An RNA of 177 nucleotides, treated with 2A3 and DMS and read out base by base. Reactivities are given for positions 27 through 126. For DMS the reverse transcriptase was MarathonRT. The DMS profile rests on 11,541 reads. The reactions ran in a buffer of 150 mM KOAc, 10 mM MgCl2 and 150 mM bicine (pH 8.5), at 24 C.
[RMDB]
RNA sequence: GGGAACGACUCGAGUAGAGUCGAAAAGAUAUGGAGGGUACAGGGAGCUUUAUGAUCGGAAACGAUCAUAAUGAGCGACGAUCUGUCCCUCCUAAGUCAAAAGUGAGAGCACUUCGGUGCUCUCACAUCGUAAAGCAAUGUUCGCAUUGCUUUACGAAAAAGAAACAACAACAACAAC
Reactivity to 2A3 in 0.01 (KOAc 150mM, MgCl2 10mM, bicine 150mM(pH8.5), 24C), signal-to-noise 4, nucleotides 027 to 126: g000a000u010a010u040g000g000a010g030g010g020u300a020c010a000g010g000g020a010g000c000u030u040u000a010u000g010a000u020c010g010g000a000a000a000c010g000a000u000c000a000u000a000a050u300g160a010g010c010g300a300c010g000a010u010c000u010g000u000c000c000c000u000c000c000u000a000a000g000u020c000a000a020a000a030g000u010g000a010g000a000g020c010a000c010u100u130c300g150g000u000g000c000u010c000u000c000a000c000a000
Reactivity to DMS in 0.01 (KOAc 150mM, MgCl2 10mM, bicine 150mM(pH8.5), 24C), signal-to-noise 4, nucleotides 027 to 126: g000a020u000a010u020g000g010a020g010g000g010u040a010c010a020g010g000g000a010g020c000u000u000u010a000u010g010a000u000c000g010g010a010a000a020c000g020a010u000c010a000u000a000a120u060g020a040g020c000g000a070c300g010a000u010c000u000g010u000c000c000c000u000c000c000u000a000a040g000u000c000a080a070a110a150g020u010g000a020g010a020g020c000a000c000u000u010c270g030g010u000g010c000u000c000u000c000a000c010a020